Chemical mapping of a 207-nucleotide RNA with 2A3. The reactions ran in a buffer of 150 mM KOAc, 10 mM MgCl2 and 150 mM bicine (pH 8.5), at 24 C. Reactivities are given for positions 27 through 156. The 2A3 profile rests on 824 reads.
[RMDB]
RNA sequence: GGGAACGACUCGAGUAGAGUCGAAAAAUAAAGGCCAAGGUCUUUAGCCUGGCACCUCCAGGAAGUGACCACCUGGGCCUGCCCCAGUGUCUCUACCUCACCCGCAGCCACUGUUUUCACAUAGCCAUUUCACUCUAGUUAUAAAACUGUCCCCAGACGUCCUAAAAUGAUUCGUCAUUUUAGGACGAAAAGAAACAACAACAACAAC
Reactivity to 2A3 in 0.01 (KOAc 150mM, MgCl2 10mM, bicine 150mM(pH8.5), 24C), signal-to-noise 2, nucleotides 027 to 156: a000u120a000a080a020g000g000c000c000a010a070g020g000u020c020u070u210u180a100g040c000c040u020g010g040c060a080c030c010u160c010c000a010g000g040a030a080g100u050g050a000c010c010a010c040c070u040g000g000g040c000c000u040g000c030c000c000c000a020g050u030g040u060c000u000c010u050a070c000c000u040c030a010c000c000c050g050c020a020g020c000c000a050c020u010g050u040u050u050u110c060a030c030a080u130a020g020c030c000a080u010u100u110c030a020c030u060c020u060a010g050u040u050a110u070a170a110a080a050c040u100g010u100c040c000c000c000a060g030a100